[RMDB]
RNA sequence: GGGAACGACUCGAGUAGAGUCGAAAAGUCUCCCGAUUCGUCGGGAGACCGAGAAAUUCAGGUGAUUUGCUACCUUUAAGUGCAGCAAGAAAUUCAAAGGAAACACCAUGGCGUUCGCGCCAUGGAACGUGAGUAUCCGUUUCGACGGAUACUCACGAAAAGAAACAACAACAACAAC
Reactivity to DMS in 0.01 (KOAc 150mM, MgCl2 10mM, bicine 150mM(pH8.5), 24C), signal-to-noise 2, nucleotides 027 to 126: g010u000c020u000c000c000c030g020a020u000u010c160g000u000c000g010g010g020a060g020a000c010c010g010a100g020a300a080a060u000u030c080a050g010g010u000g000a120u020u000u000g010c010u000a000c000c000u000u020u020a000a050g010u000g000c020a010g020c250a060a140g010a040a090a070u010u000c060a040a030a150g030g000a110a050a070c150a090c020c000a000u010g000g000c010g000u000u000c250g010c010g000c000c000a000u000g000g030a030a010
Reactivity to 2A3 in 0.01 (KOAc 150mM, MgCl2 10mM, bicine 150mM(pH8.5), 24C), signal-to-noise 2, nucleotides 027 to 126: g010u000c000u010c000c000c000g010a030u020u050c150g010u010c010g050g000g010a030g000a000c000c010g010a000g050a040a070a020u160u100c060a020g000g040u010g150a300u090u100u070g000c010u020a020c000c000u040u160u200a020a020g010u010g050c010a000g030c020a050a030g090a070a070a050u160u160c100a070a050a040g100g040a090a100a000c060a020c030c000a000u010g000g000c030g010u040u020c240g000c000g000c000c000a000u010g000g010a010a000

Chemical mapping of a 177-nucleotide RNA with DMS and 2A3. The reactions ran in a buffer of 150 mM KOAc, 10 mM MgCl2 and 150 mM bicine (pH 8.5), at 24 C. For DMS the reverse transcriptase was MarathonRT. It was measured as part of the RMDB library M2PK50.